[RMDB]
RNA sequence: GGGAACGACUCGAGUAGAGUCGAAAAUGUCCGGUCCCAUGAGUCAAAAGCCGGUAAGAACCUCUGGCCCGAGGUCGCUCGUCAGGACUGGACCACUGGACGCAGCACUCUGGUCACCAUAGCGGGUGUUGCUGAUACUUUUCGAAGUAUCAGCAACAAAAGAAACAACAACAACAAC
Reactivity to 2A3 in 0.01 (KOAc 150mM, MgCl2 10mM, bicine 150mM(pH8.5), 24C), signal-to-noise 4, nucleotides 027 to 126: u120g000u000c000c000g010g000u000c000c000c010a040u080g010a000g030u050c070a020a050a050a110g140c170c090g010g010u010a020a010g030a040a010c010c010u020c040u120g160g000c020c040c060g010a010g000g020u010c010g000c000u010c000g060u040c060a040g000g010a030c010u020g010g010a000c000c000a040c010u040g020g010a010c020g030c070a030g040c000a020c020u030c010u030g050g000u040c010a040c040c020a070u100a050g080c060g010g030g030u030
Reactivity to DMS in 0.01 (KOAc 150mM, MgCl2 10mM, bicine 150mM(pH8.5), 24C), signal-to-noise 3, nucleotides 027 to 126: u030g010u000c000c000g000g000u000c030c000c300a130u020g000a060g000u020c030a080a060a170a160g000c180c090g010g000u000a000a060g010a230a050c080c000u010c050u010g000g010c100c130c090g010a020g000g010u000c040g000c020u000c010g020u010c300a180g030g000a020c020u000g020g000a070c000c050a030c030u000g010g020a050c080g000c050a050g010c070a080c020u000c090u020g020g020u000c060a090c060c020a070u020a110g040c050g000g000g000u000